RNA sequence: GGGAACGACUCGAGUAGAGUCGAAAAUACCAUGAGAUCACUAUGAGAUCAGGGAGGAUGUUAUGAGCCAUGGGAUAGGUAUCGUGGGUACAGGAGGUAUUGCGGACAAGCACGCACUCGCCGUAGGGAGUGCCGCGGAAUUCGUUCCGCGGCACUCAAAAGAAACAACAACAACAAC
Reactivity to 2A3 in 0.01 (KOAc 150mM, MgCl2 10mM, bicine 150mM(pH8.5), 24C), signal-to-noise 2, nucleotides 027 to 126: u120a040c010c010a080u130g070a000g010a100u070c030a030c110u150a110u210g120a060g020a170u040c020a040g030g020g010a040g050g020a060u070g060u150u100a110u130g120a000g020c000c000a080u080g000g020g030a020u100a050g050g000u070a050u150c030g030u060g000g020g020u020a050c030a020g050g010a020g080g000u100a060u080u150g010c030g000g010a030c050a080a000g050c040a020c080g000c000a030c010u030c030g000c000c060g030u020a070g090g090
Reactivity to DMS in 0.01 (KOAc 150mM, MgCl2 10mM, bicine 150mM(pH8.5), 24C), signal-to-noise 2, nucleotides 027 to 126: u010a120c030c010a110u000g010a170g000a110u010c040a110c160u000a130u020g010a070g020a070u010c020a080g000g000g010a080g000g000a060u010g000u010u000a080u010g000a060g000c000c030a090u010g000g010g000a070u010a050g000g000u000a040u010c100g030u000g000g000g000u010a060c110a090g010g020a070g000g020u010a030u020u010g010c030g000g010a090c130a040a080g010c090a100c070g000c060a080c100u010c070g000c020c060g020u000a090g020g000
An RNA of 177 nucleotides, treated with 2A3 and DMS and read out base by base. For 2A3, 1,273 sequencing reads were counted. Conditions: 150 mM KOAc, 10 mM MgCl2 and 150 mM bicine (pH 8.5), 24 C. Reactivities are given for positions 27 through 126. 2A3 adducts were read by reverse transcription with SuperScript II with manganese. In probing experiments dimethyl sulfate is read out at A N1 and C N3, which are open when not base-paired.